[RMDB]
RNA sequence: GGGAACGACUCGAGUAGAGUCGAAAAGAUAUGGAAGUUGUAACAGUGAUGACCUCGGAAACGAGCAAGCUGUUUACAACGCUUCCUAAGUCAAAGGGUUUCCCAACCUUCGGGUUGGGAAACCCAACAGGAUAUACAGGUUCGCCUGUAUAUCCUGAAAAGAAACAACAACAACAAC
Reactivity to DMS in 0.01 (KOAc 150mM, MgCl2 10mM, bicine 150mM(pH8.5), 24C), signal-to-noise 3, nucleotides 027 to 126: g000a080u000a300u020g010g010a020a080g010u000u000g000u000a010a010c010a000g010u000g010a080u020g010a110c300c000u000c000g000g000a090a110a130c000g010a000g000c040a070a220g000c000u000g000u010u000u000a010c010a020a020c070g010c220u010u000c000c000u000a080a140g010u000c050a080a090a110g010g000g010u000u000u000c010c000c010a000a020c000c010u000u010c230g010g000g060u000u000g010g000g010a000a020a000c000c000c000a000a030
Reactivity to 2A3 in 0.01 (KOAc 150mM, MgCl2 10mM, bicine 150mM(pH8.5), 24C), signal-to-noise 2, nucleotides 027 to 126: g030a010u120a030u190g010g010a040a020g010u070u010g020u020a000a000c000a010g020u010g130a300u170g050a120c010c020u010c000g040g000a110a080a050c030g020a010g020c000a040a100g000c010u000g040u220u080u050a000c000a020a020c060g000c010u010u020c020c000u030a130a060g090u060c050a000a060a160g010g000g030u060u000u040c050c000c000a020a000c010c010u070u100c300g150g000g000u040u030g030g000g010a000a010a010c000c000c000a000a000
About this RNA
Source: RMDB library TTRDEL, as collected in RNAgym. Structure probing data (DMS and 2A3) for a 177-nucleotide construct. DMS adducts were read by reverse transcription with MarathonRT. High DMS reactivity at an A or C suggests that its Watson-Crick edge is free. The 2A3 profile rests on 3,291 reads. Reactivities are given for positions 27 through 126. 2A3 adducts were read by reverse transcription with SuperScript II with manganese. The reactions ran in a buffer of 150 mM KOAc, 10 mM MgCl2 and 150 mM bicine (pH 8.5), at 24 C.